[RMDB]
RNA sequence: GGGAACGACUCGAGUAGAGUCGAAAAAACACCGACCAGCUGCUGUUCGACGGCCUGCCCUGGGUAUCCCGCGCGCAGGACGAGCACGACGAAUUCGCCGAGCUGCUGGCUUCCCGCGGUGCGGAAGCUAUCCCACUAUCUUCGGAUAGUGGGAUAGAAAAGAAACAACAACAACAAC
Reactivity to 2A3 in 0.01 (KOAc 150mM, MgCl2 10mM, bicine 150mM(pH8.5), 24C), signal-to-noise 4, nucleotides 027 to 126: a010a010c050a020c010c010g030a050c020c010a000g030c020u040g000c020u050g030u110u040c030g040a050c000g060g010c000c000u020g000c000c000c000u070g070g060g000u160a190u270c030c020c000g030c010g000c020g040c020a000g020g010a030c020g020a020g010c070a070c200g060a000c020g040a050a120u180u140c080g010c090c020g050a010g010c010u020g010c030u020g040g000c000u030u020c000c000c000g030c030g050g020u070g000c060g090g060a050a000g030
Reactivity to DMS in 0.01 (KOAc 150mM, MgCl2 10mM, bicine 150mM(pH8.5), 24C), signal-to-noise 8, nucleotides 027 to 126: a060a050c040a040c020c010g010a150c050c010a040g010c010u000g000c020u000g010u000u000c030g020a150c030g010g000c010c010u000g000c020c010c010u010g000g010g030u010a110u000c040c020c030g020c160g010c070g010c010a020g000g000a040c020g000a080g000c030a120c030g010a130c030g000a080a090u000u000c100g020c090c090g010a060g010c010u000g010c020u000g000g000c300u000u000c010c010c010g020c050g010g010u000g020c140g010g000a090a040g010